[RMDB]
RNA sequence: GGGAACGACUCGAGUAGAGUCGAAAAGAUAUGGAUACUGUUGAGACAUGGACCGCACGAUUUAUCACGACUCGGAAACGAGUCUAUGAUAAAUCGUGCGGUCCAACAGCUCAAAGUAUCCUAAGUCGAUAUCCCUUAACUUCGGUUAAGGGAUAUCAAAAGAAACAACAACAACAAC
Reactivity to DMS in 0.01 (KOAc 150mM, MgCl2 10mM, bicine 150mM(pH8.5), 24C), signal-to-noise 1, nucleotides 027 to 126: g010a150u000a300u010g000g000a000u000a010c000u000g000u000u000g000a040g000a040c060a290u000g020g040a010c020c000g030c000a040c030g010a010u000u000u000a000u000c000a080c300g000a010c000u020c000g000g010a100a150a230c000g000a020g000u000c000u000a060u010g010a010u000a020a000a000u000c010g040u030g000c000g000g000u010c010c000a010a010c170a240g010c000u000c000a020a040a000g000u000a000u000c000c000u010a020a060g020u000c080

Structure probing data (DMS) for a 177-nucleotide construct.